This 207-nucleotide RNA was probed chemically with DMS and 2A3. Reactivities are given for positions 27 through 156. 2A3 adducts were read by reverse transcription with SuperScript II with manganese. The RNA was probed in 150 mM KOAc, 10 mM MgCl2 and 150 mM bicine (pH 8.5) at 24 C. Source: RMDB library OK3TST, as collected in RNAgym.
RNA sequence: GGGAACGACUCGAGUAGAGUCGAAAAGGUUACUCAUGUUAUUGACGUCUGCCAAGACAGCAGAUGUCUUAGUACAAUAGAUGGGUUAGGUAUAGAAUCUCCCUUAGAUGUUACUAUCCCUUAUACUUUCCAUUUGGGUGUCAGGGAGAGGGAAAAGCUACAUGACAUCUUUCGAGAUGUCAUGUAGAAAAGAAACAACAACAACAAC
Reactivity to DMS in 0.01 (KOAc 150mM, MgCl2 10mM, bicine 150mM(pH8.5), 24C), signal-to-noise 4, nucleotides 027 to 156: g000g030u010u000a060c040u000c030a080u000g010u010u000a070u010u010g010a040c040g040u000c040u000g030c000c010a100a230g010a180c160a050g020c020a050g000a040u000g010u000c020u000u010a050g020u010a150c090a060a110u000a070g000a080u000g020g000g010u000u000a040g040g010u000a170u010a110g010a080a080u000c030u000c010c000c010u000u000a110g010a120u000g030u000u000a090c060u000a060u000c010c000c010u000u000a070u000a030c030u000u000u010c050c070a230u000u000u000g010g010g040u000g020u010c100a040g020g010g010a030g000a010g010g000g010a050a060a090a110g020
Reactivity to 2A3 in 0.01 (KOAc 150mM, MgCl2 10mM, bicine 150mM(pH8.5), 24C), signal-to-noise 5, nucleotides 027 to 156: g060g020u060u040a020c020u010c000a030u090g010u060u120a120u080u090g010a010c000g010u000c000u010g000c030c050a140a140g160a130c060a010g010c010a000g000a020u020g010u010c010u000u040a010g010u000a010c060a080a080u050a070g080a040u050g040g000g050u050u080a050g050g080u080a070u040a150g120a070a040u020c020u030c010c000c000u020u050a120g010a110u110g080u170u080a050c040u040a040u060c010c000c020u040u010a030u010a020c010u060u130u060c080c040a210u070u060u120g070g000g010u030g000u020c010a010g000g010g010a010g010a000g020g010g030a050a090a000a020g050